[RMDB]
RNA sequence: GGGAACGACUCGAGUAGAGUCGAAAAUUGGGGCCCUUCCGCUCCAGAUCUUCGCCUGGUCCGACUAUCCCAAGCCGGAGUUCCAGCACGGGGUGGUGCCGGCGGCGAUCGUCGUGCUCCUGGUGACGGGAGAUACGUGAUUCGUCACGUAUCUCCCAAAAGAAACAACAACAACAAC
Reactivity to DMS in 0.01 (KOAc 150mM, MgCl2 10mM, bicine 150mM(pH8.5), 24C), signal-to-noise 1, nucleotides 027 to 126: u010u000g000g000g030g010c000c090c160u010u010c110c130g010c030u010c020c020a060g010a060u010c020u000u000c000g000c030c000u000g060g010u000c090c010g000a050c050u000a030u020c000c010c020a170a300g020c010c000g000g010a300g030u000u000c010c020a020g040c090a170c270g000g000g020g090u000g010g020u030g040c060c000g000g000c030g000g030c220g000a030u000c010g010u000c010g010u000g000c050u000c020c000u000g000g050u000g000a120c180